[RMDB]
RNA sequence: GGGAACGACUCGAGUAGAGUCGAAAAGCAGCGGAUCGACCAGAGCUGCGAACACUUGAGCGGAUCCUCCGGAGCUCUUGUGGAUUAGGACGUUCUCGACGGUCUGCGGAUUCGAGUUCGUCCGAAAGGCUACCUUCUCGUUCGCGAGGAGGUAGCCAAAAGAAACAACAACAACAAC
Reactivity to DMS in 0.01 (KOAc 150mM, MgCl2 10mM, bicine 150mM(pH8.5), 24C), signal-to-noise 3, nucleotides 027 to 126: g010c030a010g010c000g000g010a060u020c100g020a100c090c070a060g000a190g000c000u000g020c030g010a130a080c040a010c010u030u000g000a000g000c000g000g000a100u010c060c020u000c060c030g000g010a300g000c000u000c030u000u000g000u010g020g000a150u030u040a060g010g020a030c000g000u000u000c000u000c000g000a040c300g000g000u010c040u020g000c170g040g000a040u010u000c010g000a020g000u000u000c010g020u000c000c010g010a020a040a120
Reactivity to 2A3 in 0.01 (KOAc 150mM, MgCl2 10mM, bicine 150mM(pH8.5), 24C), signal-to-noise 4, nucleotides 027 to 126: g010c000a000g020c010g050g070a120u080c040g110a070c030c040a020g010a010g040c000u020g000c000g000a060a000c010a000c010u020u060g000a010g010c020g080g130a200u090c010c030u060c030c070g030g020a020g000c000u010c010u010u000g010u020g030g030a110u110u170a040g010g000a000c000g000u010u000c010u020c010g060a070c120g040g050u040c050u060g100c100g090g050a060u040u040c010g000a000g000u010u000c000g010u000c000c010g010a020a020a000
Structure probing data (DMS and 2A3) for a 177-nucleotide construct. Conditions: 150 mM KOAc, 10 mM MgCl2 and 150 mM bicine (pH 8.5), 24 C. It was measured as part of the RMDB library OK1LIB. Values cover nucleotides 27 to 126. 2A3 adducts were read by reverse transcription with SuperScript II with manganese. DMS adducts were read by reverse transcription with MarathonRT.